[RMDB]
RNA sequence: GGGAACGACUCGAGUAGAGUCGAAAAGAUAUGGAUACUUGACGACCAACAGCUGCCAUCGGAAACGAUGGCAGACAUGGUCGGUCACGGGUAUCCUAAGUCAAACCCGACUGUUCGCAGUCGGGAAGACCCUAAUAUUCUUCGGAAUAUUAGGGUCAAAAGAAACAACAACAACAAC
Reactivity to 2A3 in 0.01 (KOAc 150mM, MgCl2 10mM, bicine 150mM(pH8.5), 24C), signal-to-noise 4, nucleotides 027 to 126: g020a010u070a010u120g000g000a000u000a020c010u030u060g070a100c090g010a010c030c030a120a300c070a170g050c000u000g010c010c000a010u010c000g030g010a050a060a020c000g010a010u010g000g000c020a000g000a000c010a100u040g010g060u130c130g000g010u020c040a010c090g050g000g000u010a010u020c000c000u010a120a000g060u030c030a100a020a150c000c010c000g000a000c010u010g050u090u110c300g000c240a000g000u000c000g010g020g000a000a020
Reactivity to DMS in 0.01 (KOAc 150mM, MgCl2 10mM, bicine 150mM(pH8.5), 24C), signal-to-noise 5, nucleotides 027 to 126: g010a050u000a300u010g000g010a010u000a010c000u000u000g020a130c050g000a000c010c000a050a080c270a190g010c010u000g010c000c010a010u000c000g030g000a140a080a220c000g010a020u000g000g010c000a000g000a020c060a120u010g010g020u000c020g000g000u000c050a130c300g010g000g010u000a000u000c010c000u010a020a070g010u010c020a140a110a190c000c000c000g000a010c000u010g000u010u010c200g010c000a010g000u000c000g000g000g000a030a020
The record gives the reactivity of an RNA of 177 nucleotides to 2A3 and DMS.
Reactivities are given for positions 27 through 126.
The 2A3 profile rests on 10,697 reads.
The DMS profile rests on 5,871 reads.
The reactions ran in a buffer of 150 mM KOAc, 10 mM MgCl2 and 150 mM bicine (pH 8.5), at 24 C.
It was measured as part of the RMDB library TTRDES.